[RMDB]
RNA sequence: GGGAACGACUCGAGUAGAGUCGAAAAACAUGGACAACGUGGAAGCGUGUUCACAAUAUCUAAGUAAAAAAGAGAGAGAAAAGACUAUGACUAACACACAACACAAGAACAUUCUGAAGCACCUUAAGACAGCCAAGGGACUGACAGUCCGUGAAGCCAGUGAACGUAGGUUCGCCUACGUUCACUGAAAAGAAACAACAACAACAAC
Reactivity to 2A3 in 0.01 (KOAc 150mM, MgCl2 10mM, bicine 150mM(pH8.5), 24C), signal-to-noise 4, nucleotides 027 to 156: a000c010a030u040g020g010a020c010a170a040c140g010u030g090g050a100a040g060c020g020u020g020u040u050c060a070c040a080a070u070a060u170c070u100a160a140g010u130a120a100a060a030a030a090g070a010g000a000g000a000g030a050a050a030a030g050a020c050u030a030u140g090a040c030u080a170a010c030a000c010a020c030a150a060c030a020c020a140a030g010a070a030c040a050u040u030c020u040g030a030a010g020c020a040c010c000u020u030a040a010g050a060c010a010g020c020c030a030a050g050g000g010a010c030u020g020a010c020a030g000u000c010c020g010u050g030a030a010g020c020
Reactivity to DMS in 0.01 (KOAc 150mM, MgCl2 10mM, bicine 150mM(pH8.5), 24C), signal-to-noise 1, nucleotides 027 to 156: a040c040a140u000g020g050a020c020a010a110c020g000u000g040g010a090a150g070c080g000u000g060u000u000c050a100c080a080a130u000a080u010c020u000a040a070g010u020a010a050a040a050a070a070g000a070g000a140g000a180g060a040a140a070a040g000a080c050u000a060u000g040a110c050u000a080a060c080a100c020a060c100a050a060c060a010c040a070a080g000a000a100c000a040u010u010c140u000g000a200a130g010c050a050c020c060u000u000a040a040g070a010c060a070g000c010c070a030a160g010g000g000a150c080u020g010a120c100a100g080u000c000c010g060u020g000a110a110g000c060